Conditions: 150 mM KOAc, 10 mM MgCl2 and 150 mM bicine (pH 8.5), 24 C. Structure probing data (2A3 and DMS) for a 177-nucleotide construct. For DMS the reverse transcriptase was MarathonRT. For DMS, 6,554 sequencing reads were counted.

[RMDB]
RNA sequence: GGGAACGACUCGAGUAGAGUCGAAAAUGGCGACGUAUUCUUUUACCCAGAUUCACGGCCCGGACAUCUCGUCCAUCACGGCUCGCCCAAUCAGGCCAGCCGUGGCCGCCGACCCUACAGGGUUGCGCUAAGCCAUUAUGUUCGCAUAAUGGCUUAGAAAAGAAACAACAACAACAAC
Reactivity to 2A3 in 0.01 (KOAc 150mM, MgCl2 10mM, bicine 150mM(pH8.5), 24C), signal-to-noise 5, nucleotides 027 to 126: u110g030g010c030g020a110c020g060u070a100u050u090c040u030u070u070u100a080c010c000c010a020g010a100u080u060c070a020c070g020g010c020c070c070g000g000a010c010a070u140c140u070c210g010u000c010c000a020u060c010a000c000g010g000c000u000c010g020c000c000c000a110a270u160c060a010g000g000c000c020a000g000c000c000g000u010g000g020c010c010g010c010c010g030a040c000c000c000u050a070c070a080g030g000g000u020u030g030c060g000
Reactivity to DMS in 0.01 (KOAc 150mM, MgCl2 10mM, bicine 150mM(pH8.5), 24C), signal-to-noise 7, nucleotides 027 to 126: u010g010g010c060g010a100c070g010u000a070u000u000c020u010u010u010u010a110c050c020c050a140g000a130u010u010c110a110c030g010g020c030c170c160g000g010a030c030a120u010c200u010c120g010u000c010c020a190u010c050a010c000g000g010c000u010c300g000c000c010c060a090a140u010c300a090g000g010c000c060a010g010c000c000g020u000g000g010c200c040g020c060c020g000a060c010c000c010u000a110c230a150g000g000g010u000u000g000c140g010